[RMDB]
RNA sequence: GGGAACGACUCGAGUAGAGUCGAAAAGAUAUGGAGCGUAAAGCAUCGAUCUAGAGGAUCGGAAACGAUCCCUAGGGAGCUUUGAUCUCCUAAGUCAAACCGUACAGCCGUUCGCGGCUGUACGGAAGUACGACUUAUAGUUCGCUAUAAGUCGUACAAAAGAAACAACAACAACAAC
Reactivity to 2A3 in 0.01 (KOAc 150mM, MgCl2 10mM, bicine 150mM(pH8.5), 24C), signal-to-noise 7, nucleotides 027 to 126: g010a000u030a010u080g000g000a000g010c040g060u200a020a010a010g010c040a090u300c190g200a160u040c040u010a020g140a300g070g010a010u000c000g000g000a030a010a010c000g000a000u000c000c010c000u000a000g030g060g060a090g000c010u010u010u020g050a050u030c000u000c000c000u010a040a000g020u010c040a070a060a100c000c000g000u010a000c000a000g010c000c030g060u160u290c300g030c020g180g000c000u000g000u010a000c010g010g000a010a000
Reactivity to DMS in 0.01 (KOAc 150mM, MgCl2 10mM, bicine 150mM(pH8.5), 24C), signal-to-noise 6, nucleotides 027 to 126: g000a020u000a160u010g010g010a020g010c270g010u000a010a010a000g030c000a250u000c220g000a090u010c000u000a000g000a170g010g000a000u000c000g000g000a020a030a060c000g010a000u000c000c000c000u000a000g000g010g000a080g020c000u000u000u000g000a080u010c000u010c000c000u000a020a090g000u000c010a110a120a190c000c000g000u000a000c000a010g010c000c000g050u000u010c240g020c020g010g000c000u000g000u000a000c000g000g000a010a040